Notes
The data come from the RNA Mapping Database (RMDB), library RFMREP. The record gives the reactivity of an RNA of 177 nucleotides to DMS and 2A3. 2A3 adducts were read by reverse transcription with SuperScript II with manganese.
RNA sequence: GGGAACGACUCGAGUAGAGUCGAAAAGGUGUGUUCGCACACCGCUUUCUUUGGUUAUCUAGCUGUAUGAGUUUGGUUGUACAUCAUAAAGCUAGGUUACCGGAGUUUAUUUUGGGCUUCGGCCCAACCUAACUUACUAGUUCGCUAGUAAGUUAGGAAAAGAAACAACAACAACAAC
Reactivity to DMS in 0.01 (KOAc 150mM, MgCl2 10mM, bicine 150mM(pH8.5), 24C), signal-to-noise 7, nucleotides 027 to 126: g010g030u000g020u000g010u000u010c240g010c010a000c000a010c000c000g000c190u000u010u000c000u000u000u010g010g010u000u000a000u000c000u000a000g000c000u000g000u000a000u000g000a030g010u000u000u010g010g010u000u010g010u000a130c070a120u000c000a010u000a010a030a010g000c000u000a000g000g000u000u000a010c000c000g010g000a020g010u010u000u010a080u010u000u000u000g010g010g010c010u000u010c180g030g000c000c000c000a010a030
Reactivity to 2A3 in 0.01 (KOAc 150mM, MgCl2 10mM, bicine 150mM(pH8.5), 24C), signal-to-noise 9, nucleotides 027 to 126: g000g000u010g000u010g010u030u110c200g040c070a000c010a000c000c010g020c020u100u150u020c000u010u020u030g010g000u010u010a000u000c000u010a000g000c010u010g030u050a020u010g020a040g080u050u190u160g250g030u130u170g090u130a050c020a140u010c000a000u020a010a070a000g000c000u000a010g000g000u000u010a000c000c000g010g000a010g010u140u200u070a170u040u190u060u030g010g000g000c010u040u040c200g090g000c010c000c000a010a010